[RMDB]
RNA sequence: GGGAACGACUCGAGUAGAGUCGAAAACAAACCGUGCAAAAUUGUCAAAUGCGGUCUACCGUCAGAAUUUCGGGCGGAAAUACGACAUUAUACAGAAAGCCGGCCGCAAUGUCGUAUAGCACGGAAAGAUGUCCAUACUCUUCGGAGUAUGGACAUCAAAAGAAACAACAACAACAAC
Reactivity to DMS in 0.01 (KOAc 150mM, MgCl2 10mM, bicine 150mM(pH8.5), 24C), signal-to-noise 2, nucleotides 027 to 126: c070a100a080a170c000c020g030u000g000c000a010a030a020a010u000u010g000u020c060a070a110a060u000g000c010g010g000u000c030u000a190c020c000g030u000c020a070g000a060a290u000u030u010c030g010g000g000c000g000g010a090a030a010u020a100c150g000a120c040a070u010u000a190u090a100c300a230g000a180a110a130g040c110c070g000g010c040c030g040c010a040a140u000g010u020c020g050u050a000u000a160g010c010a000c000g010g000a000a070a100
Reactivity to 2A3 in 0.01 (KOAc 150mM, MgCl2 10mM, bicine 150mM(pH8.5), 24C), signal-to-noise 5, nucleotides 027 to 126: c010a000a040a010c010c000g000u000g000c000a020a030a130a230u110u140g040u080c010a030a040a120u100g000c000g010g000u010c000u040a040c000c020g010u000c000a020g030a240a230u100u180u200c060g020g000g000c010g010g040a030a040a030u080a020c020g050a020c030a010u120u160a130u160a110c110a030g250a090a080a020g090c070c040g000g000c020c000g000c000a000a030u020g000u010c000g000u010a010u020a020g000c000a000c000g000g010a050a000a000

Structure probing data (DMS and 2A3) for a 177-nucleotide construct. 2A3 is a SHAPE reagent: it acylates the 2'-hydroxyl of flexible nucleotides of all four kinds. The reactions ran in a buffer of 150 mM KOAc, 10 mM MgCl2 and 150 mM bicine (pH 8.5), at 24 C.